[RMDB]
Description:
Chemical mapping of a 207-nucleotide RNA with 2A3.

RNA sequence: GGGAACGACUCGAGUAGAGUCGAAAAGCUCUGGAAUUGAGGCCCCUCUAACAAUAAUCCAAAACUACUUCGCAGAGUAAUCUGCCGAAUCGUAGGAUGCCCAUUACUAUCUAUUUUUGGGGCAUCUAAAACUGUCAGUGCUUCGGCACUGACAGAACGUGUAGCCAUUGUUCGCAAUGGCUACACGAAAAGAAACAACAACAACAAC
Reactivity to 2A3 in 0.01 (KOAc 150mM, MgCl2 10mM, bicine 150mM(pH8.5), 24C), signal-to-noise 1, nucleotides 027 to 156: g010c010u000c040u000g120g030a180a100u090u060g050a050g050g020c010c000c000c020u130c150u170a060a100c040a050a230u090a010a030u090c030c050a040a080a000a110c000u040a000c000u010u030c040g000c020a000g010a020g020u110a070a200u020c000u060g030c080c070g020a010a020u020c040g000u030a030g140g000a000u000g000c000c000c000a010u120u040a060c040u180a050u090c050u070a180u140u130u020u050u050g040g000g000g000c000a010u000c000u050a010a000a010a010c020u000g000u000c000a050g010u000g000c000u030u050c100g070g000c010a000c000u000g000a020c000a000g000a010a000

Overview:
The data come from the RNA Mapping Database (RMDB), library M2RFOK. Values cover nucleotides 27 to 156. The RNA was probed in 150 mM KOAc, 10 mM MgCl2 and 150 mM bicine (pH 8.5) at 24 C. 2A3 adducts were read by reverse transcription with SuperScript II with manganese.